Structure probing data (2A3 and DMS) for a 177-nucleotide construct. For 2A3, 56,592 sequencing reads were counted. For 2A3 the reverse transcriptase was SuperScript II with manganese. Values cover nucleotides 27 to 126. The reactions ran in a buffer of 150 mM KOAc, 10 mM MgCl2 and 150 mM bicine (pH 8.5), at 24 C. As a SHAPE reagent, 2A3 marks flexible, mostly unpaired nucleotides at the ribose 2'-OH.

RNA sequence: GGGAACGACUCGAGUAGAGUCGAAAAGGAUCCUCUCACAGGAUUGUCUCUGUGUUCCGAAACUCCAACAGUAUUGCUUCGGGACACCUACAGCAAUACUGUGGGUAUAGAGAGUAGGAGAGGAUCGACUAAUAUACGGUUUCGACCGUAUAUUAGUAAAAGAAACAACAACAACAAC
Reactivity to 2A3 in 0.01 (KOAc 150mM, MgCl2 10mM, bicine 150mM(pH8.5), 24C), signal-to-noise 9, nucleotides 027 to 126: g090g000a010u000c010c000u010c000u010c010a100c030a050g120g080a230u200u280g150u050c040u000c010u060g040u010g040u150u030c020c010g040a070a040a020c050u060c030c020a060a040c010a090g040u040a040u030u060g010c010u030u050c050g020g010g090a120c070a150c050c000u040a030c050a010g000c010a020a030u010a070c000u000g000u010g000g000g010u030a030u090a040g140a000g010a010g040u090a060g010g060a000g000a000g000g000a000u000c000g000
Reactivity to DMS in 0.01 (KOAc 150mM, MgCl2 10mM, bicine 150mM(pH8.5), 24C), signal-to-noise 9, nucleotides 027 to 126: g010g000a010u000c000c000u000c000u000c010a110c080a110g010g010a140u010u020g010u010c050u010c010u000g010u000g010u010u000c030c030g010a120a130a080c030u010c040c040a080a040c040a040g000u000a050u000u000g000c010u000u010c300g000g000g000a110c300a070c020c010u000a090c190a020g000c010a030a020u000a140c000u000g000u000g000g000g000u000a060u010a040g000a070g000a070g010u000a130g000g000a040g000a020g010g000a010u000c000g000